[RMDB]
Source: RMDB library OK2TST, as collected in RNAgym. Chemical mapping of a 177-nucleotide RNA with DMS and 2A3. Values are in units of 0.01, from 0 to 300, in steps of 10.
RNA sequence: GGGAACGACUCGAGUAGAGUCGAAAAACAUUGUUCAGGAUCUUCAGCCGGUUGGUGUACAUGAUCGCGAAACCGACCGAAUUGUUGCGCGAGACGUUGCCGAUCACCGCACUGUCGUCGGUAUACAUACGUGACUAAUCUUCGGAUUAGUCACGUAAAAAGAAACAACAACAACAAC
Reactivity to DMS in 0.01 (KOAc 150mM, MgCl2 10mM, bicine 150mM(pH8.5), 24C), signal-to-noise 3, nucleotides 027 to 126: a080c120a110u000u010g010u010u000c070a110g010g000a060u000c040u000u010c080a120g000c090c040g000g010u000u000g010g000u000g010u010a080c200a100u020g000a090u010c050g030c100g000a080a080a040c020c030g000a060c070c060g000a030a100u010u000g020u010u010g000c040g020c040g000a060g000a090c090g000u010u000g020c090c030g010a050u010c100a090c060c050g010c060a010c120u000g000u000c070g000u000c010g000g000u000a060u000a040c140a220
Reactivity to 2A3 in 0.01 (KOAc 150mM, MgCl2 10mM, bicine 150mM(pH8.5), 24C), signal-to-noise 1, nucleotides 027 to 126: a000c100a080u100u170g030u110u070c060a110g020g110a110u000c000u060u030c070a020g080c090c000g080g000u150u130g040g040u020g010u100a040c120a110u110g070a040u040c030g000c050g130a140a000a000c040c000g060a040c020c020g020a160a150u150u150g010u100u030g030c050g010c050g000a020g000a060c040g050u020u050g000c030c000g000a040u070c050a000c060c030g060c020a030c080u030g000u090c030g030u000c010g030g020u030a030u010a060c090a080